[RMDB]
RNA sequence: GGGAACGACUCGAGUAGAGUCGAAAAAAAUGUCGCACGGGGAGCUCCUCUCAGGGGUUGCGCAGCACCAUAGCGACAAAAACCGAGUUCAGCACCACAUGCGCCACAACAGGCAUUCCAGACAGCCGAUGCGCUGCACUGGACACGCCCGCUAGGCGAUAGAUGUAGGUUUCGACCUACAUCUAUCAAAAGAAACAACAACAACAAC
Reactivity to DMS in 0.01 (KOAc 150mM, MgCl2 10mM, bicine 150mM(pH8.5), 24C), signal-to-noise 2, nucleotides 027 to 156: a030a040a040u010g010u000c020g040c000a060c030g040g010g000g020a240g020c110u000c020c000u020c080u000c130a090g010g040g000g050u000u000g010c080g020c030a130g010c030a080c050c060a160u010a110g000c010g010a010c060a010a020a050a070a090c030c050g010a210g020u000u000c070a100g030c070a100c000c020a040c020a230u000g010c000g020c010c010a070c060a080a070c030a010g000g010c010a080u010u000c010c010a040g020a050c010a040g000c000c020g000a080u000g020c100g020c000u000g000c020a100c010u000g000g010a030c120a030c080g000c000c000c000g030c020u000a110g030g010c050
Reactivity to 2A3 in 0.01 (KOAc 150mM, MgCl2 10mM, bicine 150mM(pH8.5), 24C), signal-to-noise 3, nucleotides 027 to 156: a000a000a050u050g000u000c000g010c020a030c070g000g030g000g020a050g010c010u010c030c010u030c030u090c090a090g020g030g000g050u110u190g000c080g000c040a050g060c020a030c040c000a050u060a100g010c000g020a020c000a020a100a000a010a020c040c020g010a020g030u050u080c050a020g020c040a050c070c000a040c040a120u130g050c010g000c000c030a050c030a140a070c000a050g020g010c000a010u070u050c000c000a010g050a060c000a010g000c010c030g240a170u250g050c190g000c090u040g000c100a170c070u000g000g020a020c010a010c060g000c000c010c000g020c040u060a050g090g000c030